RNA sequence: GGGAACGACUCGAGUAGAGUCGAAAAGACUAGACGCGACGGCGGGACGACGCGCGGUGACGUCGUGACGACAGGCGGCGACGGCGGGAUGACACGCGGUGACGGCUGAACGACAGGCGUCGAGUGGUGUGAGAUAGGUCUUCGGACCUAUCUCACAAAAAGAAACAACAACAACAAC
Reactivity to 2A3 in 0.01 (KOAc 150mM, MgCl2 10mM, bicine 150mM(pH8.5), 24C), signal-to-noise 2, nucleotides 027 to 126: g050a000c010u060a010g040a090c000g030c020g010a080c000g030g030c030g010g010g020a030c070g000a000c000g070c000g040c020g020g010u050g010a000c020g020u010c000g020u040g050a020c050g020a050c000a050g000g150c020g000g000c040g040a030c010g060g060c000g020g020g000a060u080g020a040c020a040c070g030c060g080g030u080g030a000c000g020g010c000u020g020a120a030c010g060a010c050a040g100g050c020g020u000c010g000a030g010u070g080g100
Reactivity to DMS in 0.01 (KOAc 150mM, MgCl2 10mM, bicine 150mM(pH8.5), 24C), signal-to-noise 2, nucleotides 027 to 126: g010a060c120u010a040g000a070c100g000c000g010a100c170g000g030c010g000g000g000a110c080g020a040c030g000c020g020c060g060g040u010g000a080c010g030u000c000g030u020g010a080c060g000a110c100a090g000g050c010g000g040c040g010a070c090g040g010c040g020g000g040a120u070g000a120c110a030c050g000c020g010g020u050g000a110c020g000g050c000u000g000a090a200c040g000a060c070a020g010g000c010g000u000c010g000a130g020u000g000g030